[RMDB]
RNA sequence: GGGAACGACUCGAGUAGAGUCGAAAACCUCCCUUCGUCCUUCGGCAUUGGCAUUGUGGUGCGUCGUGGGAGAGCGUGCCGCAUGGGGAAGCCGUGUACGAGGACGUACACCUUGUUUUGGUGGGGGAGAGUGUCACGUCCCGCUUUCGGGAGUGUCCUAGAUUGUCUUCUUCGGAAGACAAUCUAGAAAAGAAACAACAACAACAAC
Reactivity to 2A3 in 0.01 (KOAc 150mM, MgCl2 10mM, bicine 150mM(pH8.5), 24C), signal-to-noise 9, nucleotides 027 to 156: c000c000u010c000c000c000u030u060c030g000u010c020c010u170u230c030g010g000c020a060u170u300g040g000c070a120u050u030g020u010g010g010u010g000c000g000u070c030g030u110g030g160g010a050g010a010g010c000g000u010g000c000c000g000c020a030u050g010g000g040g120a080a050g000c000c070g000u000g000u000a300c010g000a000g000g010a000c000g030u070a010c000a000c000c010u110u200g090u250u300u210u170g020g010u010g000g010g000g020g000a010g000a010g030u070g030u020c010a010c030g300u100c010c020c000g020c140u180u220u300c040g000g000g000a010g000u010g000u000c000
Reactivity to DMS in 0.01 (KOAc 150mM, MgCl2 10mM, bicine 150mM(pH8.5), 24C), signal-to-noise 2, nucleotides 027 to 156: c040c030u000c010c000c000u000u000c030g020u000c000c000u010u010c030g010g030c020a030u000u010g130g020c020a260u000u000g070u000g030g050u010g020c010g040u000c020g010u010g040g000g010a240g020a290g000c010g020u000g010c030c000g020c000a010u000g020g050g030g010a210a260g010c000c000g000u000g020u010a050c030g000a100g010g000a050c000g050u000a030c000a020c020c020u000u000g010u000u000u000u000g020g060u000g010g020g000g010g020a130g010a090g010u000g000u000c090a050c020g000u010c000c010c000g010c300u000u000u000c030g000g010g020a210g020u010g000u000c030